[RMDB]
RNA sequence: GGGAACGACUCGAGUAGAGUCGAAAAACGACUGCAACCUGCUUUCGAUACAUUAUCGUCUGCGGUACUUGUAGUGCUAAAUGAAUGUGGGCCCUCCGUGUGCGUGUGAACUAAUUGAACUAGCACUCCACUAAUCAUAGUUCGCUAUGAUUAGUGGAAAAGAAACAACAACAACAAC
Reactivity to DMS in 0.01 (KOAc 150mM, MgCl2 10mM, bicine 150mM(pH8.5), 24C), signal-to-noise 3, nucleotides 027 to 126: a150c130g000a030c000u000g000c040a050a030c050c010u000g000c000u000u000u010c020g010a000u000a110c220a190u000u020a020u000c010g010u000c020u000g010c000g000g010u000a080c300u010u000g000u000a000g010u000g020c060u010a060a100a060u000g000a060a050u020g030u010g000g010g010c030c010c030u000c020c030g000u000g020u000g000c050g020u000g020u010g000a070a160c110u010a090a130u010u000g010a040a110c090u010a150g010c100a050c080u000
Reactivity to 2A3 in 0.01 (KOAc 150mM, MgCl2 10mM, bicine 150mM(pH8.5), 24C), signal-to-noise 5, nucleotides 027 to 126: a000c020g040a000c000u020g010c010a000a270c010c010u010g000c010u020u010u030c010g010a000u020a070c140a280u130u270a020u130c000g020u000c000u020g000c010g000g030u030a070c030u010u020g020u030a000g000u020g040c030u040a100a110a120u170g140a100a040u180g010u100g040g020g030c000c010c010u000c030c020g050u080g010u020g020c030g010u030g020u010g080a040a040c010u040a110a100u090u100g040a040a020c020u020a050g030c020a010c000u000

The record gives the reactivity of an RNA of 177 nucleotides to DMS and 2A3. 2A3 adducts were read by reverse transcription with SuperScript II with manganese. For DMS the reverse transcriptase was MarathonRT.